[RMDB]
RNA sequence: GGGAACGACUCGAGUAGAGUCGAAAAGCUGAGUAUACGAGGUUAGUUCAUACUCGUAUGCAUGAUUGGACAAAUUAAAAUCUCAAUUUGGAUCAGGGCCUCCCUCCAGCGACGGCCGAACAUACAAAUCACUCCAUAGAUUCGUCUAUGGAGUGAUAAAAGAAACAACAACAACAAC
Reactivity to DMS in 0.01 (KOAc 150mM, MgCl2 10mM, bicine 150mM(pH8.5), 24C), signal-to-noise 7, nucleotides 027 to 126: g010c020u000g010a190g020u000a000u000a000c000g000a010g010g020u000u000a100g010u000u010c180a100u010a080c010u000c010g020u000a000u000g010c010a120u010g000a070u000u000g010g010a090c040a020a020a040u000u000a070a050a110a110u020c160u010c120a020a030u000u000u000g000g000a120u000c040a070g000g010g000c010c010u000c010c000c020u010c090c010a020g010c020g010a090c160g000g000c010c030g010a040a030c120a060u000a140c200a030a080
Reactivity to 2A3 in 0.01 (KOAc 150mM, MgCl2 10mM, bicine 150mM(pH8.5), 24C), signal-to-noise 5, nucleotides 027 to 126: g000c010u010g020a020g040u020a000u000a010c000g000a010g040g030u120u170a060g090u200u200c060a090u200a210c010u000c010g000u010a000u020g000c010a050u090g020a050u030u120g020g010a010c010a010a050a030u110u140a100a130a170a240u120c090u020c150a030a040u040u020u030g110g010a130u070c040a040g070g020g020c010c010u000c000c000c010u050c030c010a000g000c020g030a030c030g010g000c010c000g010a010a010c030a040u160a040c020a020a100
Source: RMDB library M2PK90, as collected in RNAgym.
This 177-nucleotide RNA was probed chemically with DMS and 2A3.
The 2A3 profile rests on 7,422 reads.
Reactivities are given for positions 27 through 126.
2A3 adducts were read by reverse transcription with SuperScript II with manganese.
The RNA was probed in 150 mM KOAc, 10 mM MgCl2 and 150 mM bicine (pH 8.5) at 24 C.